[RMDB]
RNA sequence: GGGAACGACUCGAGUAGAGUCGAAAACUCGGUUAAUUCGUUAACCGAGACUUCUUAAACAACUUUUCAACACAUAGAUGGUAAAUAUUCAAAGAUGUUCGAAUGCGAUAAACUUCGGUUUAUCGAAAUACUCCCAAUUGUUCGCAAUUGGGAGUAUAAAAGAAACAACAACAACAAC
Reactivity to 2A3 in 0.01 (KOAc 150mM, MgCl2 10mM, bicine 150mM(pH8.5), 24C), signal-to-noise 3, nucleotides 027 to 126: c000u000c000g000g000u020u020a000a020u060u090c100g030u030u010a000a000c000c010g000a000g000a000c010u030u030c010u020u100a170a100a030c050a040a050c030u110u060u060u060c050a050a000c020a010c010a070u110a120g080a080u080g080g010u070a060a210a050u200a090u070u050c020a030a030a100g060a030u060g020u020u050c070g030a130a040u140g020c010g010a000u000a010a000a000c010u020u030c080g050g000u020u010u000a000u000c000g000a000a000
Reactivity to DMS in 0.01 (KOAc 150mM, MgCl2 10mM, bicine 150mM(pH8.5), 24C), signal-to-noise 3, nucleotides 027 to 126: c000u000c010g000g010u000u000a010a040u000u010c150g010u000u000a000a000c000c000g010a000g030a040c050u000u000c010u000u000a080a090a090c130a050a120c050u000u000u010u000c040a080a070c070a030c080a090u000a100g000a080u000g010g010u000a060a140a060u010a070u010u000c050a050a090a140g020a060u000g000u000u000c170g010a070a050u010g020c000g000a010u000a000a010a000c000u000u010c160g000g000u000u000u000a000u000c000g000a020a040